[RMDB]
RNA sequence: GGGAACGACUCGAGUAGAGUCGAAAACUGGUGUUGUGCGCCCGGGUUAUGUUGCGUUUGCGUUCCCCUCCGGCAGGACAAUAUUACUGGCCGCCAACUCCCCCAUGUUGUGGAACAUGGCGCACGCGCUGGGUAUAGGAUUCGUCCUAUACCCAGCAAAAGAAACAACAACAACAAC
Reactivity to DMS in 0.01 (KOAc 150mM, MgCl2 10mM, bicine 150mM(pH8.5), 24C), signal-to-noise 3, nucleotides 027 to 126: c070u010g000g010u010g020u010u010g050u000g000c040g050c090c000c100g000g030g000u010u010a050u010g000u000u010g010c130g000u010u020u020g000c030g010u010u010c010c010c000c030u010c090c020g000g000c090a050g000g000a100c070a050a120u010a080u020u040a090c060u020g000g010c060c020g010c030c040a090a040c070u020c020c000c010c030c080a070u040g000u000u000g020u020g010g000a090a080c070a060u020g010g010c050g010c040a040c060g040c170
Reactivity to 2A3 in 0.01 (KOAc 150mM, MgCl2 10mM, bicine 150mM(pH8.5), 24C), signal-to-noise 3, nucleotides 027 to 126: c020u010g000g120u050g000u040u070g050u020g010c000g000c000c000c000g000g010g010u130u100a170u130g070u070u050g090c070g030u000u060u240g050c030g000u030u090c020c000c000c000u020c010c020g060g010c030a060g000g060a020c070a120a090u060a030u240u100a050c070u000g090g000c030c000g000c030c000a020a060c030u080c000c010c000c010c000a050u080g020u060u030g150u120g010g070a040a010c010a060u050g000g000c050g000c010a020c030g000c010
The record gives the reactivity of an RNA of 177 nucleotides to DMS and 2A3. Values cover nucleotides 27 to 126. For 2A3 the reverse transcriptase was SuperScript II with manganese. The data come from the RNA Mapping Database (RMDB), library OK1LIB. High 2A3 reactivity points to a flexible backbone, as in loops and unpaired stretches.